[RMDB]
RNA sequence: GGGAACGACUCGAGUAGAGUCGAAAAGGCUGUUGAGCGGGGCACAGCAGUGUCUUUCCACCUGGACGUUGUGAAGCCGCUGGAGGCUAAAGCUUACGUGCAGGUGGUGCUGAGUUGGCAAGACAGCGACUGUCACUUGUUUCGACAAGUGACAGUCAAAAGAAACAACAACAACAAC
Reactivity to 2A3 in 0.01 (KOAc 150mM, MgCl2 10mM, bicine 150mM(pH8.5), 24C), signal-to-noise 2, nucleotides 027 to 126: g130g000c010u010g010u000u020g030a000g030c020g090g100g090g000c010a010c010a030g080c040a040g020u010g120u120c000u080u110u040c040c000a000c000c010u000g000g160a030c000g000u000u000g050u050g070a030a020g010c010c030g020c240u220g150g110a120g040g000c000u030a140a070a040g050c010u100u140a000c010g000u000g190c010a000g010g030u010g000g000u010g000c010u010g000a120g020u130u090g100g050c000a010a000g010a020c000a010g000c000
Reactivity to DMS in 0.01 (KOAc 150mM, MgCl2 10mM, bicine 150mM(pH8.5), 24C), signal-to-noise 3, nucleotides 027 to 126: g000g010c000u000g010u000u010g010a300g000c030g030g000g000g020c040a060c000a050g000c050a050g010u010g000u010c080u020u020u020c000c000a020c010c010u000g000g000a030c000g000u010u000g010u010g000a300a090g000c010c010g000c210u010g030g030a130g010g010c000u000a020a130a250g010c010u010u000a010c020g010u000g000c000a010g000g000u000g000g010u000g010c020u000g010a070g010u000u010g010g000c040a050a300g020a030c030a020g010c020
Structure probing data (2A3 and DMS) for a 177-nucleotide construct. Values cover nucleotides 27 to 126.